[RMDB]
RNA sequence: GGGAACGACUCGAGUAGAGUCGAAAAGGAGCGACAAGUAUUUAGCUUGAGAUAGCUAAAUCACCACGGUAUGAUUAGGGUGAGACCUAGGAACCGUAGGGGUAUUCUCAAAGGAAGCUUUUGCAGUGAAGGAAGAUACGAUUCGUCGUAUCUUCAACAAUGUACUACCGUUCGCGGUAGUACAUUGAAAAGAAACAACAACAACAAC
Reactivity to DMS in 0.01 (KOAc 150mM, MgCl2 10mM, bicine 150mM(pH8.5), 24C), signal-to-noise 4, nucleotides 027 to 156: g010g020a070g010c040g010a100c040a070a090g030u000a050u000u000u000a000g000c000u010u000g010a300g010a100u000a010g000c000u000a000a010a010u010c040a070c010c010a040c020g020g010u000a090u010g010a230u000u000a040g010g010g010u010g010a290g010a150c010c000u010a040g000g010a080a060c010c010g000u000a070g020g010g010g020u000a050u000u000c030u000c030a060a090a130g020g010a110a130g000c050u000u000u000u000g010c030a120g010u010g010a090a160g020g010a030a000g010a020u000a000c010g010a070u000u000c300g010u000c010g020u000a010u000c000u000u000c000a050a140
Reactivity to 2A3 in 0.01 (KOAc 150mM, MgCl2 10mM, bicine 150mM(pH8.5), 24C), signal-to-noise 6, nucleotides 027 to 156: g060g010a040g000c040g080a060c050a090a020g060u100a070u010u010u010a000g000c000u020u040g040a040g010a080u190a030g000c000u000a010a000a020u030c030a030c000c030a020c020g000g020u120a060u210g090a140u100u070a030g030g000g020u070g110a050g040a060c010c010u020a000g010g070a030a030c010c010g010u040a100g000g020g000g000u040a080u080u060c040u010c000a050a050a010g060g020a050a020g000c000u040u080u110u140g040c090a050g020u030g140a090a040g110g000a000a000g000a000u000a010c000g000a010u010u080c160g040u000c000g000u100a000u000c010u000u010c000a000a000